[RMDB]
RNA sequence: GGGAACGACUCGAGUAGAGUCGAAAAGCUGUUGUUGCUGCUGUUCUUAAUAGCUUGUGCAUCUGCUUUGUUACCUCUAUACCAUUGUGUAUAGUACCUUACACUGCAUUGUACUAUUAUGCUACAUACAUCUGUCGGUUCGCCGACAGAAAAAGAAACAACAACAACAAC
Reactivity to DMS in 0.01 (KOAc 150mM, MgCl2 10mM, bicine 150mM(pH8.5), 24C), signal-to-noise 3, nucleotides 027 to 129: g000c000u000g010u000u000g010u040u020g020c090u020g060c090u000g010u000u000c010u020u060a060a200u000a050g030c040u070u000g000u070g020c030a000u020c070u010g020c060u000u010u010g010u010u010a100c240c150u020c020u090a090u050a070c070c070a200u080u010g060u070g090u080a020u090a050g030u000a060c180c170u030u000a060c030a080c080u090g000c090a120u000u080g090u090a000c140u000a040u050u040a070u020g040c090u040a050c210a020u110a080c180a140
Conditions: 150 mM KOAc, 10 mM MgCl2 and 150 mM bicine (pH 8.5), 24 C. Chemical mapping of a 170-nucleotide RNA with DMS. Reactivities are rounded to 0.1 and cut off at 0 and 3. Values cover nucleotides 27 to 129. For DMS the reverse transcriptase was MarathonRT.